[RMDB]
RNA sequence: GGGAACGACUCGAGUAGAGUCGAAAAGCGUGAAACUAGCAAAGAACAAUCACGGCAAUAGGAUGAAGCGAGAUAGAAAGUCCGGAUUCAUGCUCACGUCUCUGUCUUGCGAGACAAACAUAAGAAAGAAAGGAGCUCUUUUCGAAGAGCUCCUUUCAAAAGAAACAACAACAACAAC
Reactivity to DMS in 0.01 (KOAc 150mM, MgCl2 10mM, bicine 150mM(pH8.5), 24C), signal-to-noise 2, nucleotides 027 to 126: g030c010g070u000g000a010a060a030c080u000a090g000c230a050a030a040g010a140a080c100a190a080u000c110a070c070g000g000c120a150a080u030a150g000g000a090u000g020a150a190g000c020g000a020g000a060u030a180g000a080a090a100g000u000c020c000g010g030a030u020u070c060a080u000g000c060u020c240a050c050g000u000c100u000c000u000g000u000c050u000u050g000c190g000a060g000a050c050a050a140a020c290a110u100a080a060g000a060a100a040
Reactivity to 2A3 in 0.01 (KOAc 150mM, MgCl2 10mM, bicine 150mM(pH8.5), 24C), signal-to-noise 2, nucleotides 027 to 126: g060c020g050u050g030a120a070a050c080u080a070g040c070a050a000a300g030a000a030c000a020a040u100c040a030c060g020g020c050a010a000u100a170g100g060a060u030g070a030a000g070c000g030a060g050a130u160a050g250a020a180a000g070u000c000c000g000g020a000u140u010c010a030u130g050c010u040c130a110c050g040u040c000u000c000u130g070u080c020u040u040g060c080g050a010g000a000c000a000a090a040c070a040u300a000a110g100a100a050a000